RNA sequence: GGGAACGACUCGAGUAGAGUCGAAAAGGUCAGGCCUGAUCGGAAACAGCAGCAGGUGAGUCCGCCUUAUGUGAAGGAUCGGCUGAAACACGAGGAAAUACUGAGCCAACGCAAGUCGGUAGCCGAAAAAAUCUAGUUCACUUCGGUGAACUAGAAAGGAGUAUCAUAACUUCGGUUAUGAUACUCCAAAAGAAACAACAACAACAAC
Reactivity to DMS in 0.01 (KOAc 150mM, MgCl2 10mM, bicine 150mM(pH8.5), 24C), signal-to-noise 2, nucleotides 027 to 156: g000g020u000c050a110g000g010c020c020u000g020a040u000c000g010g010a200a120a110c050a160g040c050a130g010c120a090g000g030u000g040a090g010u020c030c040g000c040c000u000u000a050u000g020u000g020a200a150g010g030a080u010c030g030g000c020u000g030a160a100a060c060a090c040g020a120g030g010a060a050a100u000a060c050u000g010a120g020c030c000a020a110c050g000c070a030a130g010u000c050g010g010u000a060g020c000c010g020a000a050a050a090a090a130u000c000u000a010g010u000u000c000a010c010u010u000c280g030g010u010g010a010a000c000u000a010g000a000a090a110
Reactivity to 2A3 in 0.01 (KOAc 150mM, MgCl2 10mM, bicine 150mM(pH8.5), 24C), signal-to-noise 5, nucleotides 027 to 156: g040g010u040c040a020g010g110c000c040u130g010a060u070c030g040g080a090a090a030c030a040g080c030a010g000c020a010g020g050u050g050a080g070u060c050c030g030c010c010u100u090a110u120g080u050g080a090a030g070g010a030u050c030g010g000c020u020g000a060a060a010c070a010c070g040a080g000g070a060a060a060u100a090c040u040g030a010g020c010c020a070a030c050g000c100a060a070g040u050c020g000g060u070a040g070c020c020g000a070a000a000a000a000a010u010c000u000a000g000u000u000c000a000c000u030u020c120g060g000u000g000a000a000c000u000a000g000a010a000a010
Chemical mapping of a 207-nucleotide RNA with DMS and 2A3. The RNA was probed in 150 mM KOAc, 10 mM MgCl2 and 150 mM bicine (pH 8.5) at 24 C. For 2A3 the reverse transcriptase was SuperScript II with manganese. For DMS the reverse transcriptase was MarathonRT. The DMS profile rests on 4,283 reads.